[RMDB]
The data come from the RNA Mapping Database (RMDB), library OK2TRN. Chemical mapping of a 177-nucleotide RNA with 2A3 and DMS. Reactivities are rounded to 0.1 and cut off at 0 and 3. The reactions ran in a buffer of 150 mM KOAc, 10 mM MgCl2 and 150 mM bicine (pH 8.5), at 24 C. Values cover nucleotides 27 to 126.

RNA sequence: GGGAACGACUCGAGUAGAGUCGAAAAUCGCCUCGAAUAGUUAAUGCUCACAUAAGCAAUUUGUCAGAUCAUCUGAUUAAAAUAAUACCUGAUCGAGAGGAGGUCCAGCUGCCAUUGCUUGCCGGAGGUUAUAAAUAGCGUUCGCGCUAUUUAUAACAAAAGAAACAACAACAACAAC
Reactivity to 2A3 in 0.01 (KOAc 150mM, MgCl2 10mM, bicine 150mM(pH8.5), 24C), signal-to-noise 6, nucleotides 027 to 126: u050c010g060c010c010u000c030g050a060a110u070a150g050u050u150a110a060u130g010c000u010c040a150c040a160u170a140a050g000c020a050a100u030u040u120g030u010c010a000g000a110u110c020a080u030c070u020g020a040u110u280a030a070a030a030u190a030a050u060a090c010c010u030g030a060u040c030g020a020g010a040g130g040a020g020g010u000c020c010a010g000c010u020g020c020c010a090u070u100g000c020u020u070g010c020c020g100g010a060g120
Reactivity to DMS in 0.01 (KOAc 150mM, MgCl2 10mM, bicine 150mM(pH8.5), 24C), signal-to-noise 7, nucleotides 027 to 126: u000c070g000c050c010u000c050g010a080a110u010a070g010u000u000a070a120u010g010c030u000c130a090c200a100u010a080a070g010c050a100a110u000u000u000g000u000c020a040g010a190u010c150a110u000c010u000g000a040u000u000a040a040a050a080u010a070a120u010a100c070c030u000g000a060u000c040g010a100g010a090g010g010a070g010g000u000c030c030a080g010c040u010g010c050c050a050u000u000g010c030u000u010g010c050c030g000g010a100g010